[RMDB]
RNA sequence: GGGAACGACUCGAGUAGAGUCGAAAAGAUAUGGAAUUCCGUGGAGGGCGACGAUCUCGGAAACGAGGGAGCCUGACACGGAGAUUCCUAAGUCAAAUCUAUGGUCGAGUUCGCUCGACCAUAGAAACGAUGAACCUCAGUUCGCUGAGGUUCAUCGAAAAGAAACAACAACAACAAC
Reactivity to DMS in 0.01 (KOAc 150mM, MgCl2 10mM, bicine 150mM(pH8.5), 24C), signal-to-noise 1, nucleotides 027 to 126: g030a050u010a300u000g000g000a020a000u000u000c000c010g040u000g000g000a300g000g000g020c000g000a040c250g010a000u000c000u000c010g010g010a180a070a260c000g010a040g000g000g000a020g010c000c010u010g020a300c000a030c000g000g010a010g020a000u000u000c000c000u000a080a170g000u000c040a130a130a160u000c010u000a010u000g000g000u000c000g030a050g010u000u020c190g020c000u000c000g010a020c000c000a000u000a000g000a010a060a100
Chemical mapping of a 177-nucleotide RNA with DMS.
Conditions: 150 mM KOAc, 10 mM MgCl2 and 150 mM bicine (pH 8.5), 24 C.
DMS adducts were read by reverse transcription with MarathonRT.
Values cover nucleotides 27 to 126.
For DMS, 778 sequencing reads were counted.